[RMDB]
RNA sequence: GGGAACGACUCGAGUAGAGUCGAAAAAAGCCUGCCAAGCUUUUCCGCAAGGAUGUCAUUGCCAACGCUUCUUCUCGUAAGACCUAUAAGAGCAUUGCUGGUCGUAUCGGCAGAACUGGCUAUCGUAUACUUUUAAUUUAUUCGUAAAUUAAAAGUAAAAAGAAACAACAACAACAAC
Reactivity to 2A3 in 0.01 (KOAc 150mM, MgCl2 10mM, bicine 150mM(pH8.5), 24C), signal-to-noise 2, nucleotides 027 to 126: a000a000g060c040c010u060g070c020c000a080a030g000c000u110u080u020u010c040c000g030c050a090a060g060g020a030u060g070u120c030a030u000u170g000c020c000a070a080c050g040c030u030u010c010u060u010c040u000c020g010u040a030a040g000a030c010c010u080a090u050a300a100g080a000g070c090a060u080u220g020c020u060g030g010u010c020g010u040a030u150c010g000g000c030a010g050a040a030c050u050g030g010c000u030a120u070c010g050u070a100
Reactivity to DMS in 0.01 (KOAc 150mM, MgCl2 10mM, bicine 150mM(pH8.5), 24C), signal-to-noise 5, nucleotides 027 to 126: a060a030g000c010c020u010g020c050c050a170a270g000c010u000u000u000u000c030c030g010c150a110a110g010g000a080u000g010u010c070a050u010u010g010c040c020a040a090c160g010c080u000u000c020u000u000c030u000c070g020u000a070a110g000a040c050c020u000a090u010a060a100g010a090g020c080a110u010u000g010c080u010g010g020u000c050g010u000a050u000c090g020g000c100a070g010a050a060c090u000g010g000c020u000a070u000c060g010u000a170